[RMDB]
RNA sequence: GGGAACGACUCGAGUAGAGUCGAAAAAGCAGGAGUACGCUCCUGCAUGGGUAGACGAAUUGACCCCAACUGAAGUUCAAUUCUAACGUUAAAAGGAGUUUUAUAUGACUGGACGUAGGCGUCCAGAUGACGAUUUCAUUCUUCGGAAUGAAAUCAAGUACCAGUUAUGGUUCGCCAUAACUGGUACAAAAGAAACAACAACAACAAC
Reactivity to 2A3 in 0.01 (KOAc 150mM, MgCl2 10mM, bicine 150mM(pH8.5), 24C), signal-to-noise 2, nucleotides 027 to 156: a020g000c000a010g000g010a000g010u020a060c200g030c070u000c000c010u000g000c010a010u000g000g000g030u160a130g020a220c080g000a020a000u020u020g000a010c020c010c000c040a140a140c220u300g030a030a010g020u080u000c000a000a000u000u000c030u090a090a060c070g050u080u180a030a020a050a080g110g010a080g020u090u030u110u060a190u070a030u170g170a100c000u000g040g020a010c040g010u140a210g050g220c050g010u000c000c000a000g010a020u050g010a010c080g000a000u000u000u000c000a000u000u000c000u000u020c140g050g030a000a000u000g000a000a000a000u000c000a000a000
Chemical mapping of a 207-nucleotide RNA with 2A3. Source: RMDB library M2RFPK, as collected in RNAgym. The reactions ran in a buffer of 150 mM KOAc, 10 mM MgCl2 and 150 mM bicine (pH 8.5), at 24 C. Values are in units of 0.01, from 0 to 300, in steps of 10.